Conditions: 150 mM KOAc, 10 mM MgCl2 and 150 mM bicine (pH 8.5), 24 C. The record gives the reactivity of an RNA of 177 nucleotides to DMS and 2A3. 2A3 adducts were read by reverse transcription with SuperScript II with manganese.
RNA sequence: GGGAACGACUCGAGUAGAGUCGAAAAGAUAUGGAAACCGUGUGAUGACCAGCACUACCCACCUCGGAAACGAGAGGUGCUGCAAGCACAGGUUUCCUAAGUCAAAACGCGUAGUUCGCUACGCGAACCCACUGUCAAAGUUCGCUUUGACAGUGGGAAAAGAAACAACAACAACAAC
Reactivity to DMS in 0.01 (KOAc 150mM, MgCl2 10mM, bicine 150mM(pH8.5), 24C), signal-to-noise 3, nucleotides 027 to 126: g000a080u000a300u040g000g010a030a020a000c000c020g010u000g040u000g050a070u000g020a180c300c000a000g000c000a020c000u000a080c070c070c100a300c120c000u010c000g000g020a010a060a190c010g040a010g010a130g010g000u000g010c000u020g000c040a010a050g020c000a000c000a150g010g010u000u030u000c000c000u010a010a040g020u000c090a080a080a080a160c020g010c000g000u010a010g010u000u000c270g010c000u000a010c000g000c000g040a090a030
Reactivity to 2A3 in 0.01 (KOAc 150mM, MgCl2 10mM, bicine 150mM(pH8.5), 24C), signal-to-noise 3, nucleotides 027 to 126: g010a020u090a020u140g000g000a010a020a020c030c110g080u040g000u010g070a300u050g030a070c030c040a010g020c000a020c000u180a160c030c100c030a140c110c020u020c000g010g010a060a030a030c010g000a010g030a030g020g020u000g010c000u000g010c030a110a140g000c000a010c070a060g030g000u000u010u000c000c000u000a030a000g020u020c040a040a020a060a170c020g020c000g000u010a020g020u050u070c300g030c170u010a000c000g010c010g030a010a020